[RMDB]
RNA sequence: GGGAACGACUCGAGUAGAGUCGAAAAACAGCCACCGCUACGGCGGUGGCUGAGCCUCCACCACCUCCCCUGCAAACGUCCAGUGACGCAGAGGUAAUGGACGUUAGCUCCGGUGGUGAUGGACAAAUUUUCAAUCUUAUUUCGAUAAGAUUGAAAAAAAAGAAACAACAACAACAAC
Reactivity to DMS in 0.01 (KOAc 150mM, MgCl2 10mM, bicine 150mM(pH8.5), 24C), signal-to-noise 3, nucleotides 027 to 126: a140c020a030g010c010c000a040c000c000g090c040u000a120c220g040g040c040g100g120u010g030g030c030u010g000a010g020c020c010u010c020c010a020c010c000a020c000c000u010c030c010c060c300u000g010c000a040a020a020c010g000u010c010c000a050g000u010g010a080c080g020c120a120g020a150g010g000u000a080a060u000g010g000a010c000g010u010u000a050g000c020u010c120c300g000g000u000g000g000u000g000a030u000g000g000a070c200a040a080a160
Reactivity to 2A3 in 0.01 (KOAc 150mM, MgCl2 10mM, bicine 150mM(pH8.5), 24C), signal-to-noise 5, nucleotides 027 to 126: a000c000a000g000c010c000a010c020c000g050c040u080a070c300g210g000c000g000g010u000g000g000c000u000g000a000g000c000c000u050c050c000a000c010c010a010c010c000u050c010c010c000c010u020g000c010a030a000a000c000g000u000c000c000a030g020u020g120a110c020g030c110a070g060a090g240g030u040a040a090u000g000g000a000c000g010u000u010a010g000c010u050c070c040g010g000u010g000g000u000g000a010u040g000g000a030c100a030a130a080